RNA sequence: GGGAACGACUCGAGUAGAGUCGAAAAACUGGCAUAGCAAGUAAAACUGUACUGAUCUAAAUGAAAAAUGUUUCUCUUCCUAAUAAUCGCAGGUCCUUCAAUGGACAUUAUCUGCCAUUAUCAGUCGAUGAUAACAAGGAUUCGUCCUUGUUAUCAUAAAAGAAACAACAACAACAAC
Reactivity to DMS in 0.01 (KOAc 150mM, MgCl2 10mM, bicine 150mM(pH8.5), 24C), signal-to-noise 9, nucleotides 027 to 126: a070c060u000g000g010c050a070u000a060g020c060a050a050g010u000a040a060a080a090c090u010g020u010a050c050u000g010a070u010c060u010a040a090a080u030g000a020a060a070a110a100u010g000u000u000u000c020u000c050u000u010c100c030u000a050a020u000a010a010u010c300g010c020a020g010g000u000c000c010u000u020c300a090a060u020g000g000a010c010a080u010u020a090u030c000u000g010c010c060a020u000u000a010u010c100a050g010u010c300g010
Reactivity to 2A3 in 0.01 (KOAc 150mM, MgCl2 10mM, bicine 150mM(pH8.5), 24C), signal-to-noise 9, nucleotides 027 to 126: a000c030u030g060g010c040a080u080a050g020c050a080a010g030u130a060a060a050a060c050u080g050u110a040c030u040g090a120u060c040u150a080a110a110u150g130a070a030a030a040a050u080g020u000u030u000c030u010c000u050u030c010c010u030a050a040u030a030a010u020c010g000c000a000g010g040u010c000c000u090u170c110a190a300u180g000g000a000c000a010u080u120a070u040c010u010g000c000c000a010u010u010a020u030c030a010g070u050c040g050